[RMDB]
RNA sequence: GGGAACGACUCGAGUAGAGUCGAAAACGGGCACACCGGUAAAGCGAAUUUCCGCGGAAGCCGCAUUGAAGUUCUCAUACACCACUUCACCCAGCUCGCAGCAGUCGAUGGUGUAGGCAAAAUCAACAUCGAAACGUUUGAGAUCGAGCGCUUUCGCCUUUAACGCCAAGUUCGCUUGGCGUUAAAGAAAAGAAACAACAACAACAAC
Reactivity to 2A3 in 0.01 (KOAc 150mM, MgCl2 10mM, bicine 150mM(pH8.5), 24C), signal-to-noise 2, nucleotides 027 to 156: c030g010g010g000c070a040c020a050c050c040g040g000u080a120a100a000g030c010g050a030a140u030u040u080c070c020g000c020g000g000a030a000g050c230c070g010c090a110u090u250g120a130a010g030u050u000c020u000c000a010u040a040c020a000c040c000a050c030u040u060c020a060c050c050c030a030g020c040u030c040g100c040a120g030c030a020g030u090c020g080a080u080g000g010u000g030u020a020g000g070c090a080a050a100a060u270c040a020a090c020a080u260c040g070a140a030a030c060g020u050u100u080g010a020g000a020u040c040g020a010g000c000g000c000u000u000u000c020g000c020
Reactivity to DMS in 0.01 (KOAc 150mM, MgCl2 10mM, bicine 150mM(pH8.5), 24C), signal-to-noise 1, nucleotides 027 to 156: c050g030g040g020c070a110c080a090c020c040g040g090u000a030a110a110g010c050g000a200a240u000u010u000c000c000g020c060g060g030a120a070g000c030c010g180c030a250u000u000g000a070a120g000u000u000c000u010c060a090u010a060c080a110c010c030a090c030u000u010c040a100c000c040c000a230g000c060u000c010g000c020a100g030c020a100g020u010c110g000a040u000g030g030u010g000u000a070g050g060c140a130a040a020a300u030c010a010a100c030a070u000c010g030a140a080a140c070g040u000u000u000g050a070g020a110u000c010g000a090g000c010g020c060u000u000u000c000g000c060

Notes
The record gives the reactivity of an RNA of 207 nucleotides to 2A3 and DMS. It was measured as part of the RMDB library OK3TST. For DMS the reverse transcriptase was MarathonRT. The RNA was probed in 150 mM KOAc, 10 mM MgCl2 and 150 mM bicine (pH 8.5) at 24 C.